[RMDB]
RNA sequence: GGGAACGACUCGAGUAGAGUCGAAAAGAAGCCGAGGCGCUGAAACAGGCGAGCGACCCCGAGGCCAUUCUGGAAGCGCUGCAAACCCUGGAAGAAGGCGGCCCGACCAGCCUGCCUGCCAGGGAAGCUUGCUUGAACUAUUCGUAGUUCAAGCAAGAAAAGAAACAACAACAACAAC
Reactivity to 2A3 in 0.01 (KOAc 150mM, MgCl2 10mM, bicine 150mM(pH8.5), 24C), signal-to-noise 1, nucleotides 027 to 126: g020a050a020g060c020c020g010a100g060g000c020g000c010u000g000a080a090a050c050a050g000g020c100g040a020g030c030g010a090c000c040c000c040g070a020g000g120c020c000a060u180u070c050u120g010g010a050a020g000c040g010c040u070g000c020a060a070a300c030c000c000u000g000g070a160a190g030a030a010g090g000c000g000g000c070c000c010g090a130c010c010a000g000c000c010u040g020c000c010u030g000c020c000a000g010g000g000a010a010g020
Reactivity to DMS in 0.01 (KOAc 150mM, MgCl2 10mM, bicine 150mM(pH8.5), 24C), signal-to-noise 2, nucleotides 027 to 126: g000a100a220g000c030c020g020a130g020g010c020g000c030u000g000a110a160a100c080a110g030g000c040g010a130g000c100g000a120c070c000c030c040g010a120g010g010c010c020a130u000u010c090u010g000g000a170a040g020c040g040c030u020g000c130a090a130a150c010c000c000u000g010g010a110a130g020a080a020g010g010c020g010g010c000c010c010g040a050c080c070a300g000c010c000u010g060c010c000u000g000c000c000a060g000g000g020a060a020g000